The record gives the reactivity of an RNA of 177 nucleotides to DMS and 2A3. DMS adducts were read by reverse transcription with MarathonRT. 2A3 adducts were read by reverse transcription with SuperScript II with manganese. It was measured as part of the RMDB library OK1LIB. For 2A3, 756 sequencing reads were counted. The reactions ran in a buffer of 150 mM KOAc, 10 mM MgCl2 and 150 mM bicine (pH 8.5), at 24 C.
RNA sequence: GGGAACGACUCGAGUAGAGUCGAAAAUUGAUAAAGGUGUCAUCGAAGCGGCCUGGUCAAUGGGUGCCAAUACUUGGAUAGUAAUUCGUAAAGUCCUCUUACCUGAAGCCAUGCCAGCGCUAGUGUCCCUCGGGGUAGUGUUCGCACUACCCCGAGGAAAAGAAACAACAACAACAAC
Reactivity to DMS in 0.01 (KOAc 150mM, MgCl2 10mM, bicine 150mM(pH8.5), 24C), signal-to-noise 1, nucleotides 027 to 126: u030u060g020a060u040a000a050a010g100g000u010g010u000c080a010u040c040g000a110a130g080c020g000g010c090c000u000g000g000u020c130a020a150u010g050g010g000u000g000c020c050a010a000u070a040c020u000u010g000g000a000u000a050g000u020a110a130u040u000c160g020u060a130a190a110g060u000c000c080u010c070u030u010a130c090c090u000g000a250a220g010c020c050a060u000g000c000c010a050g000c090g000c090u000a030g050u000g000u020c040
Reactivity to 2A3 in 0.01 (KOAc 150mM, MgCl2 10mM, bicine 150mM(pH8.5), 24C), signal-to-noise 2, nucleotides 027 to 126: u060u010g030a000u050a270a190a000g110g000u010g000u040c010a080u010c060g060a050a000g010c020g040g030c010c020u000g000g000u030c090a060a060u010g070g020g020u040g020c030c000a050a000u110a010c020u040u050g010g050a010u000a060g150u160a110a190u190u000c040g080u170a030a000a210g000u080c050c030u010c010u030u020a050c000c050u000g020a090a000g030c000c000a000u060g060c010c000a070g000c020g000c030u020a000g030u060g160u150c080